[RMDB]
An RNA of 177 nucleotides, treated with DMS and 2A3 and read out base by base.
RNA sequence: GGGAACGACUCGAGUAGAGUCGAAAAGGGUUUGGAUUACAUCAAUAGUAACAUGAGCAGAAGUAAACAGAACAAGAAGUACUGCGGUUAUUCAAGUUCAAAGUACACACUAUCGCAAUAAAGGGAACUAUUGCGAAUUAUUCGUAAUUCGCAAUAGAAAAGAAACAACAACAACAAC
Reactivity to DMS in 0.01 (KOAc 150mM, MgCl2 10mM, bicine 150mM(pH8.5), 24C), signal-to-noise 6, nucleotides 027 to 126: g010g000g020u000u000u000g010g020a120u020u000a060c080a080u000c090a090a100u010a100g010u000a030a070c100a070u010g010a070g010c040a060g010a090a080g010u000a040a070a050c080a100g000a050a020c040a040a240g000a050a050g000u000a020c030u000g010c150g030g010u000u000a110u000u010c050a040a270g000u000u000c020a050a060a090g010u000a040c060a070c100a050c070u000a040u000c040g010c050a050a060u010a040a050a080g000g000g010a060a170
Reactivity to 2A3 in 0.01 (KOAc 150mM, MgCl2 10mM, bicine 150mM(pH8.5), 24C), signal-to-noise 4, nucleotides 027 to 126: g020g000g010u040u060u070g040g040a070u020u080a020c010a050u060c050a060a140u060a130g030u040a040a080c050a090u100g030a010g040c040a020g020a140a000g050u070a020a090a060c030a030g030a030a010c010a020a090g040a050a010g030u030a020c010u020g050c060g060g030u020u040a060u050u060c040a070a000g000u000u030c000a110a060a010g060u090a030c040a010c000a000c050u060a050u190c030g000c060a000a070u090a130a090a030g020g010g020a050a010
The reactions ran in a buffer of 150 mM KOAc, 10 mM MgCl2 and 150 mM bicine (pH 8.5), at 24 C. For 2A3, 5,189 sequencing reads were counted. It was measured as part of the RMDB library M2PK90. Reactivities are given for positions 27 through 126.